[RMDB]
RNA sequence: GGGAACGACUCGAGUAGAGUCGAAAAGAUAUGGACCUACACAGCAACAGCGUCCAUUCGGAAACGAAUGUGACGACAUGCUGGUAGGUCCUAAGUCAAAGAACGUCUUUCUUCGGAAAGACGUUCAUCGAGACAAGUUCUUCGGAACUUGUCUCGAAAAAGAAACAACAACAACAAC
Reactivity to DMS in 0.01 (KOAc 150mM, MgCl2 10mM, bicine 150mM(pH8.5), 24C), signal-to-noise 1, nucleotides 027 to 126: g030a000u000a050u020g000g000a010c000c000u030a000c000a170c010a000g010c000a130a180c180a220g000c010g010u000c000c000a020u010u000c000g000g000a000a000a050c020g010a010a010u000g010u010g000a000c020g030a040c140a080u000g030c000u010g030g020u000a000g000g020u000c000c000u010a000a020g010u000c000a120a160a090g000a030a000c000g010u000c000u000u000u000c000u020u010c250g020g000a020a020a010g010a000c000g000u000u000c000a070
Reactivity to 2A3 in 0.01 (KOAc 150mM, MgCl2 10mM, bicine 150mM(pH8.5), 24C), signal-to-noise 1, nucleotides 027 to 126: g000a000u050a010u040g010g010a010c000c010u000a030c300a000c000a080g100c030a100a300c080a300g030c000g020u000c030c000a000u040u020c000g020g000a030a000a000c000g000a000a000u090g140u280g050a000c020g040a000c030a080u200g000c000u000g000g000u000a000g020g060u010c000c010u000a000a010g010u020c000a010a010a010g000a000a000c020g020u030c000u000u030u000c010u040u090c170g190g060a000a000a000g010a000c000g000u010u000c010a000
The data come from the RNA Mapping Database (RMDB), library TTRDES. The record gives the reactivity of an RNA of 177 nucleotides to DMS and 2A3. Conditions: 150 mM KOAc, 10 mM MgCl2 and 150 mM bicine (pH 8.5), 24 C.